[RMDB]
RNA sequence: GGGAACGACUCGAGUAGAGUCGAAAAGAUAUGGAUGGGAGCAACAGCCCUACCUCGGAAACGAGGUGAGGGACAUGCUUAGUCCUAAGUCAAAACUACAUGAGCCACUUCGGUGGCUCAUGUAGAACUUCUAUGUGCGGUUCGCCGCACAUAGAAGAAAAGAAACAACAACAACAAC
Reactivity to DMS in 0.01 (KOAc 150mM, MgCl2 10mM, bicine 150mM(pH8.5), 24C), signal-to-noise 1, nucleotides 027 to 126: g000a090u000a140u000g010g010a030u000g000g010g010a020g000c000a040a050c200a220g000c000c000c000u000a060c000c000u000c000g010g000a070a060a160c010g000a010g000g000u000g000a010g000g040g010a030c040a200u000g010c010u000u000a300g020u000c010c000u020a060a140g000u000c010a050a150a100a190c010u000a000c010a010u000g010a010g000c000c010a030c000u000u000c220g050g010u000g000g000c010u000c000a000u000g040u000a000g000a060a090

Source: RMDB library TTRDEL, as collected in RNAgym. An RNA of 177 nucleotides, treated with DMS and read out base by base. Conditions: 150 mM KOAc, 10 mM MgCl2 and 150 mM bicine (pH 8.5), 24 C. Reactivities are given for positions 27 through 126. For DMS, 747 sequencing reads were counted.